[RMDB]
RNA sequence: GGGAACGACUCGAGUAGAGUCGAAAAUAACAUCGUAGUGUAAGACGAAAAGUCAACGUCGCUUGCCAGCAGGACCACCAAAGGAAUACGCAUCGGUAACUACUCGAGAUCCCAAGCGAUAACACAACUUACUGUACCAAUUCGUUGGUACAGUAAGAAAAGAAACAACAACAACAAC
Reactivity to 2A3 in 0.01 (KOAc 150mM, MgCl2 10mM, bicine 150mM(pH8.5), 24C), signal-to-noise 8, nucleotides 027 to 126: u050a000a020c020a070u080c040g060u060a100g050u040g040u150a100a070g030a030c030g060a120a100a060a030g080u050c050a020a060c040g040u010c020g010c050u030u070g030c010c020a010g010c010a020g030g060a020c010c010a010c010c020a090a060a040g070g020a090a090u090a070c050g000c060a040u030c020g010g010u040a100a100c000u010a000c000u010c000g000a010g010a030u010c000c000c000a000a010g060c030g090a070u120a190a060c080a000c010a120a080
Reactivity to DMS in 0.01 (KOAc 150mM, MgCl2 10mM, bicine 150mM(pH8.5), 24C), signal-to-noise 6, nucleotides 027 to 126: u000a080a120c120a090u010c070g010u000a070g020u000g020u010a090a120g010a050c020g010a050a060a080a130g000u000c060a050a110c110g010u000c040g020c040u010u000g020c040c040a060g010c070a060g000g000a090c040c040a060c080c060a020a070a080g000g000a080a080u000a060c090g000c070a070u010c020g010g010u000a060a110c010u000a000c000u000c000g010a020g000a100u000c010c010c000a080a080g010c120g000a040u010a060a040c070a070c150a090a100
Annotation:
Conditions: 150 mM KOAc, 10 mM MgCl2 and 150 mM bicine (pH 8.5), 24 C. An RNA of 177 nucleotides, treated with 2A3 and DMS and read out base by base. For 2A3, 16,507 sequencing reads were counted. Source: RMDB library M2PK90, as collected in RNAgym. The DMS profile rests on 5,882 reads.